This 207-nucleotide RNA was probed chemically with 2A3.
Conditions: 150 mM KOAc, 10 mM MgCl2 and 150 mM bicine (pH 8.5), 24 C.

RNA sequence: GGGAACGACUCGAGUAGAGUCGAAAACCUGGCUCGAAAUCGUCGACGCAUCGACGACGGUCCUGCCAUGAGACCGUAACGAGCACAUGUCGCCUCGAAUGGCGUCGGGGAGCCGGCAGCUUACCCCAAAACGACCGCAGCUUCGGCUGCGGUCGAACGUUUACUGUUACUUCGGUAACAGUAAACGAAAAGAAACAACAACAACAAC
Reactivity to 2A3 in 0.01 (KOAc 150mM, MgCl2 10mM, bicine 150mM(pH8.5), 24C), signal-to-noise 2, nucleotides 027 to 156: c010c010u000g080g000c000u010c010g040a130a140a170u030c000g000u000c000g030a040c100g050c230a200u130c010g000a010c000g000a010c000g000g000u000c010c020u000g030c030c020a090u140g140a030g010a060c000c000g000u040a060a060c010g000a000g080c010a020c000a090u130g020u020c020g000c010c000u120c140g240a230a130u190g010g010c010g010u020c040g000g010g020g020a000g050c030c050g070g010c020a010g000c010u080u110a160c010c000c000c020a020a060a010a040c020g010a000c000c010g000c010a020g020c000u080u170c300g140g030c000u020g000c000g000g010u020c000g000a040a000
Reactivities are rounded to 0.1 and cut off at 0 and 3. The 2A3 profile rests on 1,477 reads.